The record gives the reactivity of an RNA of 177 nucleotides to DMS.

RNA sequence: GGGAACGACUCGAGUAGAGUCGAAAAGAUAUGGAGGAGUAUGGGUUGAUCUCCAACUACCCACCUACGUGAGGUCGGAAACGACCUCGUAGAGGUUGGAGGAUCAACCCAUACUCCUCCUAAGUCAGGUACCUCUCUAGUUCGCUAGAGAGGUACCAAAAGAAACAACAACAACAAC
Reactivity to DMS in 0.01 (KOAc 150mM, MgCl2 10mM, bicine 150mM(pH8.5), 24C), signal-to-noise 1, nucleotides 027 to 126: g000a070u010a300u010g020g010a010g000g000a040g080u000a000u000g000g000g040u000u000g000a000u000c000u000c000c000a050a000c020u000a040c130c010c170a300c100c020u000a010c000g010u000g010a020g020g000u010c010g010g000a060a120a200c010g000a010c010c010u000c000g030u000a010g000a160g010g000u000u000g010g040a060g010g020a040u000c030a000a010c030c000c010a010u000a000c000u000c000c000u010c000c020u000a000a000g010u000c010a160